[RMDB]
RNA sequence: GGGAACGACUCGAGUAGAGUCGAAAAUCUGCAAUCUUCGGAUUGCAGAAAAUACGGAUCCAUACGGAUCCAUACCGAUCCAUACGGAUCCAUACGGAUCCAAAACGUACCUCUUCGGAGGUACGAAGACCAUCAGCCAGUUCGCUGGCUGAUGGUCAAAAGAAACAACAACAACAAC
Reactivity to 2A3 in 0.01 (KOAc 150mM, MgCl2 10mM, bicine 150mM(pH8.5), 24C), signal-to-noise 1, nucleotides 027 to 126: u020c000u000g030c010a000a010u000c020u020u060c100g160g000a010u010u030g060c000a000g020a000a000a000a000u110a010c070g040g000a010u000c000c000a010u060a200c080g000g040a000u000c010c000a000u040a000c010c030g070a140u100c050c020a000u050a150c120g000g020a000u000c000c000a050u120a200c070g010g000a020u000c000c000a020a000a000a020c020g000u000a000c030c000u010c020u030u060c190g100g010a030g000g000u020a010c000g000a000a010